[RMDB]
Chemical mapping of a 177-nucleotide RNA with 2A3 and DMS. Conditions: 150 mM KOAc, 10 mM MgCl2 and 150 mM bicine (pH 8.5), 24 C. For 2A3 the reverse transcriptase was SuperScript II with manganese. The data come from the RNA Mapping Database (RMDB), library OK2TRN. DMS adducts were read by reverse transcription with MarathonRT. For 2A3, 1,614 sequencing reads were counted.

RNA sequence: GGGAACGACUCGAGUAGAGUCGAAAAUAUGAUAUUUCAGGUUCUAAUAAGUAUAGUGCUAAGCAUAUGCGUGAACGGAUAGCUUACUAUAAUGAGGUUCAAUAUCCAUAUGUCGAGAUGAUUGUGGUGUGUAUACUGUCUUCGGACAGUAUACACAAAAAGAAACAACAACAACAAC
Reactivity to 2A3 in 0.01 (KOAc 150mM, MgCl2 10mM, bicine 150mM(pH8.5), 24C), signal-to-noise 2, nucleotides 027 to 126: u160a030u050g030a010u010a070u070u130u110c100a060g020g110u030u030c010u030a050a020u100a300a000g050u000a010u050a060g010u040g150c080u060a050a000g000c010a150u040a010u180g130c020g010u050g240a120a030c050g030g080a010u020a010g060c030u000u050a010c030u020a020u010a100a070u030g000a000g020g000u020u030c010a050a000u000a030u090c040c000a020u040a020u140g070u100c080g030a060g040a170u160g040a090u070u100g040u060g060g050
Reactivity to DMS in 0.01 (KOAc 150mM, MgCl2 10mM, bicine 150mM(pH8.5), 24C), signal-to-noise 4, nucleotides 027 to 126: u000a040u000g010a060u000a070u000u010u000c150a120g030g000u000u010c010u010a070a080u010a130a130g010u000a020u000a030g010u010g010c180u000a060a030g020c020a060u000a030u000g000c030g010u000g020a130a100c070g000g010a060u000a030g000c020u000u000a060c040u000a010u010a030a040u010g000a120g010g010u010u000c040a050a060u010a050u000c050c040a030u000a030u000g010u000c040g010a170g000a120u010g010a080u000u000g010u000g000g020